[RMDB]
RNA sequence: GGGAACGACUCGAGUAGAGUCGAAAACACAGUCAACGUCCACCCCCCAGAAAUGAGGUUUGGGGGCCUCAGAGUUGCUUUGUCAAUGUGACCUUGGGCAUGUGACCUCCCUCACGGUGACUCAUUGUCGUCACCUGGACAGUGGGCUGCCAGUGCCCAGCCACUAGUUUUUCGAAACUAGUGGCUGAAAAGAAACAACAACAACAAC
Reactivity to DMS in 0.01 (KOAc 150mM, MgCl2 10mM, bicine 150mM(pH8.5), 24C), signal-to-noise 2, nucleotides 027 to 156: c060a120c060a120g020u000c050a050a080c050g000u000c000c020a220c010c020c040c010c000c060a170g010a060a110a120u010g010a070g030g090u000u010u000g000g000g030g020g020c020c020u000c030a080g030a160g010u020u000g000c040u010u010u010g040u000c010a080a100u020g000u000g020a040c040c050u000u000g010g000g000c050a060u010g020u010g010a130c030c000u010c020c030c010u000c030a090c060g020g000u000g000a070c000u010c040a120u000u010g000u010c090g000u000c020a040c060c030u010g020g010a030c030a090g020u000g020g020g020c020u010g020c030c020a140g020u010g000c020c060
Reactivity to 2A3 in 0.01 (KOAc 150mM, MgCl2 10mM, bicine 150mM(pH8.5), 24C), signal-to-noise 2, nucleotides 027 to 156: c050a000c000a000g060u070c030a040a040c030g050u050c010c010a010c000c000c020c010c000c010a040g080a060a050a050u160g000a010g040g000u050u130u100g070g000g000g000g010c000c000u010c000a040g000a020g020u030u050g040c030u100u110u210g090u110c080a070a130u120g050u050g040a000c000c000u040u090g010g030g000c010a030u090g060u050g130a070c020c060u030c000c000c000u040c020a070c050g020g030u000g010a010c000u010c090a230u060u270g090u160c080g040u030c000a010c000c010u000g060g000a010c010a040g040u030g000g000g030c020u030g080c070c030a020g010u010g040c000c020
Conditions: 150 mM KOAc, 10 mM MgCl2 and 150 mM bicine (pH 8.5), 24 C. This 207-nucleotide RNA was probed chemically with DMS and 2A3. DMS adducts were read by reverse transcription with MarathonRT. 2A3 adducts were read by reverse transcription with SuperScript II with manganese.